Conditions: 150 mM KOAc, 10 mM MgCl2 and 150 mM bicine (pH 8.5), 24 C.
Structure probing data (2A3 and DMS) for a 207-nucleotide construct.
RNA sequence: GGGAACGACUCGAGUAGAGUCGAAAAACAGCGAAAGGCACAAGACUUCGAACAUUAUAGCAGUUAGUAGUUGCCUCAACCCAUUGCAAUAUAUGGGACAGUAGAGGUCGCAAGCCUAUACUGUGCGAAAAGUCGCAAGGUUUCGACCUUGCGACAAGAAUGUAAAAGUGUUCGCACUUUUACAUUCAAAAGAAACAACAACAACAAC
Reactivity to 2A3 in 0.01 (KOAc 150mM, MgCl2 10mM, bicine 150mM(pH8.5), 24C), signal-to-noise 9, nucleotides 027 to 156: a000c030a010g030c020g060a140a030a040g030g020c030a030c040a060a080g070a030c020u050u070c100g090a130a060c050a150u190u210a160u240a130g050c070a010g010u040u090a030g040u060a020g010u090u070g000c000c000u020c010a030a050c000c000c000a000u000u020g000c010a020a000u010a000u000a000u120g000g010g020a010c000a000g010u030a010g000a000g020g000u040c030g030c120a030a020g000c000c000u000a000u000a000c000u010g010u030g020c010g020a060a040a040a070g000u000c000g000c000a000a000g020g020u010u060u120c150g020a050c010c000u000u000g000c000g000a000c000a000a000
Reactivity to DMS in 0.01 (KOAc 150mM, MgCl2 10mM, bicine 150mM(pH8.5), 24C), signal-to-noise 5, nucleotides 027 to 156: a060c050a120g020c030g020a130a050a060g020g000c010a110c070a110a150g010a060c010u000u000c040g010a120a090c030a140u010u010a150u010a140g000c070a060g020u000u000a120g020u000a100g020u000u000g000c000c030u000c070a060a200c000c000c000a010u000u000g000c090a150a110u000a130u000a010u000g020g010g030a070c020a030g040u000a050g000a040g100g040u000c050g020c300a090a240g000c010c010u000a060u000a020c020u010g010u000g020c060g010a080a070a070a150g000u000c000g000c000a020a020g000g010u000u000u010c250g010a030c000c010u000u000g010c000g020a000c010a010a050
The 2A3 profile rests on 12,434 reads.